Source: RMDB library OK3TST, as collected in RNAgym. The record gives the reactivity of an RNA of 207 nucleotides to 2A3.
[RMDB]
RNA sequence: GGGAACGACUCGAGUAGAGUCGAAAAAGAGAAGGAUUGUGUGUGUGUGUCUGUAUAAUCAGUUUUCAGUUAUCUUCUGAAUGUAGGGAAGCCAUGUCAGAUGCAGAUACUGGGUUGUCAGAAAACAAGUUAUCUUUCGUUUUCAACUGCAUGGUGACAUCCUAGCCCCAUUCGUGGGGCUAGGAUGAAAAGAAACAACAACAACAAC
Reactivity to 2A3 in 0.01 (KOAc 150mM, MgCl2 10mM, bicine 150mM(pH8.5), 24C), signal-to-noise 2, nucleotides 027 to 156: a010g090a000g020a050a070g060g020a070u080u060g030u020g010u000g020u010g020u020g000u010g030u030c040u020g070u030a070u070a130a100u060c050a050g030u060u050u070u030c020a000g010u030u140a070u060c070u170u000c010u060g020a070a030u120g030u140a100g000g000g100a040a010g010c000c010a020u080g070u100c030a030g000a060u120g040c020a000g050a080u030a080c040u060g000g000g110u060u020g010u030c040a010g030a030a070a010a010c020a030a020g100u140u110a140u110c030u050u150u130c070g060u000u040u050u070c010a060a010c040u020g070c040a030u020g020g000u000g000a030